RNA sequence: GGGAACGACUCGAGUAGAGUCGAAAAAGUGGCGGCGCCUUAGGAAACUUGGUUUUCAAAAAAAUCAGAACUGCCACAGGUGGCCAAUUAAGAUAUUUGUUAAACGGUGGUUCUCCAAUCAGUCGGGAUUAUAUACCGUCUUCGGACGGUAUAUAAUAAAAGAAACAACAACAACAAC
Reactivity to DMS in 0.01 (KOAc 150mM, MgCl2 10mM, bicine 150mM(pH8.5), 24C), signal-to-noise 4, nucleotides 027 to 126: a070g010u010g010g000c090g020g010c050g000c040c020u000u000a270g000g000a080a050a050c080u070u010g010g000u000u000u000u040c100a000a010a030a060a050a050a050u020c040a040g000a160a130c150u020g000c010c000a030c160a100g020g010u010g000g010c020c040a050a100u030u030a090a130g000a080u020a030u000u010u010g010u030u020a060a060a070c120g010g000u010g000g000u000u000c030u000c040c060a060a070u040c120a040g010u010c070g010g010g000
Reactivity to 2A3 in 0.01 (KOAc 150mM, MgCl2 10mM, bicine 150mM(pH8.5), 24C), signal-to-noise 5, nucleotides 027 to 126: a000g050u060g050g040c070g010g050c020g040c010c000u050u100a090g050g070a070a050a000c030u070u090g030g030u070u040u040u110c140a090a100a050a050a000a000a020u040c010a000g060a120a030c060u080g020c010c000a020c010a020g000g070u030g040g030c010c010a020a030u160u150a110a050g020a050u100a190u150u130u090g080u040u090a050a070a030c040g030g050u040g020g020u030u010c040u000c030c010a050a110u090c020a020g100u060c030g030g000g030